This 177-nucleotide RNA was probed chemically with 2A3 and DMS. The reactions ran in a buffer of 150 mM KOAc, 10 mM MgCl2 and 150 mM bicine (pH 8.5), at 24 C. Values cover nucleotides 27 to 126. The data come from the RNA Mapping Database (RMDB), library OK1LIB.
RNA sequence: GGGAACGACUCGAGUAGAGUCGAAAAAACUGGUGGUGUUACAGGUUAUGCUGUAGCUCAUGGUAUUAAUGACAAUCAACGAGGACGUUUGAAGGCUGCUCCAUUUUAUGACAUUAAAACAAUGAUGUAAUGAGUCAUCCUUCGGGAUGACUCAUUAAAAAGAAACAACAACAACAAC
Reactivity to 2A3 in 0.01 (KOAc 150mM, MgCl2 10mM, bicine 150mM(pH8.5), 24C), signal-to-noise 1, nucleotides 027 to 126: a000a000c070u240g130g000u010g050g010u020g020u150u000a060c030a070g000g000u140u020a040u120g040c000u000g080u060a000g000c000u010c060a010u010g030g000u040a050u160u100a300a220u050g000a000c030a000a170u210c020a000a000c000g010a040g070g000a040c040g000u000u000u170g070a020a020g150g000c100u010g000c000u030c040c040a130u010u020u040u070a100u050g010a000c010a000u000u180a080a030a000a020c120a040a000u150g000a040u130g040
Reactivity to DMS in 0.01 (KOAc 150mM, MgCl2 10mM, bicine 150mM(pH8.5), 24C), signal-to-noise 1, nucleotides 027 to 126: a110a000c050u000g020g000u000g000g000u050g050u010u000a020c010a000g010g000u040u070a000u040g000c000u030g000u000a130g000c000u000c030a060u000g000g010u000a020u040u010a040a060u050g010a020c070a060a120u000c100a140a040c140g000a050g000g020a100c030g000u000u030u010g020a180a010g000g000c100u010g000c060u010c070c000a020u010u010u000u030a090u010g010a050c020a010u020u000a040a060a070a090c200a040a030u030g050a040u000g040